RNA sequence: GGGAACGACUCGAGUAGAGUCGAAAAGAUAUGGAGGCAGCUUUUGACGCUCUGGCAUUCGGAAACGAAUGUCAGAGCGAUAAGCUGCUCCUAAGUCAAAAGAGGACGACGUUCGCGUCGUCCUCAACAACUGUCAACUGUUCGCAGUUGACAGUUGAAAAGAAACAACAACAACAAC
Reactivity to DMS in 0.01 (KOAc 150mM, MgCl2 10mM, bicine 150mM(pH8.5), 24C), signal-to-noise 2, nucleotides 027 to 126: g000a060u010a300u010g010g020a020g010g010c000a000g020c000u000u010u010u020g020a250c080g000c000u010c010u000g030g010c010a000u010u000c000g020g000a100a100a180c020g000a010a020u000g000u000c000a020g010a000g010c000g020a010u000a000a010g000c000u000g000c000u000c000c010u000a030a150g010u010c070a110a060a150a110g020a000g020g010a020c000g010a030c010g010u000u010c220g020c020g030u000c000g010u000c010c000u000c010a020a070
Reactivity to 2A3 in 0.01 (KOAc 150mM, MgCl2 10mM, bicine 150mM(pH8.5), 24C), signal-to-noise 1, nucleotides 027 to 126: g020a000u100a060u170g000g020a040g170g260c010a000g000c000u110u040u120u260g190a110c060g000c000u030c000u000g000g000c000a010u010u000c010g020g010a020a050a090c010g000a000a010u020g000u010c000a000g010a000g000c000g010a000u000a000a000g000c000u000g000c000u000c000c000u000a010a010g090u060c000a040a000a100a240g010a000g000g000a010c030g010a010c000g010u080u200c300g000c050g150u000c000g000u020c000c000u000c020a000a000